An RNA of 177 nucleotides, treated with DMS and 2A3 and read out base by base. The reactions ran in a buffer of 150 mM KOAc, 10 mM MgCl2 and 150 mM bicine (pH 8.5), at 24 C. For DMS, 1,703 sequencing reads were counted. For 2A3 the reverse transcriptase was SuperScript II with manganese. Values cover nucleotides 27 to 126.
[RMDB]
RNA sequence: GGGAACGACUCGAGUAGAGUCGAAAAGAUAUGGACCGGGAGAGCGUUGAAAGUGGGUUCGGAAACGAACCGUAACAUCUGGAGCUCUAACGGUCCUAAGUCAAAGAGCUAAGUUCGCUUAGCUCAACAAUUCGCACCUGUUCGCAGGUGCGAAUUGAAAAGAAACAACAACAACAAC
Reactivity to DMS in 0.01 (KOAc 150mM, MgCl2 10mM, bicine 150mM(pH8.5), 24C), signal-to-noise 2, nucleotides 027 to 126: g000a020u000a030u010g000g000a000c000c010g010g000g020a020g010a010g020c000g030u000u000g010a040a170a220g040u010g040g000g000u000u000c000g000g000a000a030a020c010g010a000a010c000c020g020u000a090a110c070a060u020c100u000g000g010a050g010c000u000c000u010a030a020c030g000g000u000c000c010u010a010a030g000u000c020a080a090a120g000a020g000c000u000a000a010g020u000u000c200g020c010u010u010a020g010c000u000c000a020a070
Reactivity to 2A3 in 0.01 (KOAc 150mM, MgCl2 10mM, bicine 150mM(pH8.5), 24C), signal-to-noise 1, nucleotides 027 to 126: g000a000u020a000u070g010g000a000c040c010g050g010g010a010g030a010g030c110g060u260u300g060a050a070a000g010u050g080g000g000u000u000c000g010g000a000a000a020c000g000a000a010c030c000g040u130a060a020c010a100u280c060u300g110g140a080g000c000u040c000u000a000a000c000g010g000u000c000c000u000a000a000g000u000c010a000a020a120g010a010g010c010u000a000a000g020u080u130c180g050c110u000u010a000g000c000u000c000a020a020